[RMDB]
RNA sequence: GGGAACGACUCGAGUAGAGUCGAAAAUUAAAAGCAAAAGGAAACAGUCUCUGUUUGAAUACAAGAUGCUUAGUAGAGUGGUUAAGACCACAAAUAUUUGAGACUGAUCUAUUUGAGCUAGAAUCCUAGCCUUUCUACUUUCUGUCCUUGAGCAAACAACCAUAGAUCUUUUCGAAGAUCUAUGGUUAAAAGAAACAACAACAACAAC
Reactivity to DMS in 0.01 (KOAc 150mM, MgCl2 10mM, bicine 150mM(pH8.5), 24C), signal-to-noise 2, nucleotides 027 to 156: u000u000a090a060a100a100g000c030a080a220a080a060g020g000a140a130a170c020a050g010u000c030u000c020u010g020u000u000u000g030a150a070u000a100c040a070a110g000a060u000g010c050u010u000a070g030u000a060g010a100g020u000g010g020u020u000a060a120g000a150c060c050a120c000a020a030a070u000a050u000u000u010g010a150g000a060c030u000g020a120u000c030u000a090u000u000u010g000a080g020c070u010a090g000a100a120u010c020c000u000a050g000c020c020u000u000u000c010u000a020c020u000u000u000c040u000g000u000c010c010u000u000g000a230g020c030a070a070a110c110
Reactivity to 2A3 in 0.01 (KOAc 150mM, MgCl2 10mM, bicine 150mM(pH8.5), 24C), signal-to-noise 4, nucleotides 027 to 156: u110u070a050a030a010a040g040c030a060a030a020a060g060g020a070a100a030c010a010g000u000c000u000c020u050g090u050u110u120g100a110a050u150a090c030a040a030g030a070u090g030c020u050u010a010g000u030a010g030a020g020u010g050g010u050u110a100a040g080a090c010c010a000c020a010a070a080u090a020u020u090u120g010a010g000a010c000u000g000a010u010c010u020a100u080u060u070g020a020g000c000u010a010g040a090a100u060c060c000u000a010g000c000c000u030u110u030c020u030a050c000u040u090u040c050u070g100u040c020c000u010u030g020a000g040c060a180a010a000c030